[RMDB]
RNA sequence: GGGAACGACUCGAGUAGAGUCGAAAAGAUAUGGAUCAAUAAUCCAGCGAAAUGUAUCGGAAACGAUCCAUUCGCUGAAAAAAAAUCACAAUGAUCCUAAGUCAAAAGCAACUCUUCGGAGUUGCAAUCGUACAGUAUUGUUCGCAAUACUGUACGAAAAAGAAACAACAACAACAAC
Reactivity to 2A3 in 0.01 (KOAc 150mM, MgCl2 10mM, bicine 150mM(pH8.5), 24C), signal-to-noise 4, nucleotides 027 to 126: g010a000u080a030u180g000g000a000u010c030a040a090u160a200a070u110c060c020a010g000c010g020a080a050a100u020g000u010a010u010c000g030g000a100a050a050c010g000a000u000c010c000a010u000u000c000g000c000u000g110a100a010a000a000a000a010a010a030u230c110a070c050a070a220u080g000a010u000c000c010u030a170a030g060u050c050a070a070a070a030g000c000a000a000c000u010c010u060u130c300g140g000a010g000u000u010g000c000a000a030
Reactivity to DMS in 0.01 (KOAc 150mM, MgCl2 10mM, bicine 150mM(pH8.5), 24C), signal-to-noise 5, nucleotides 027 to 126: g010a050u010a300u010g000g000a020u000c000a070a070u010a120a180u010c090c000a010g010c020g000a020a050a040u000g010u000a010u010c000g010g010a130a120a200c000g000a000u000c040c000a000u000u000c000g010c000u000g000a000a010a000a060a040a060a090a110u020c180a120c210a090a060u020g020a010u010c000c000u020a070a110g010u010c060a080a060a140a120g010c000a010a010c000u000c000u000u010c190g010g000a010g000u000u000g010c000a020a010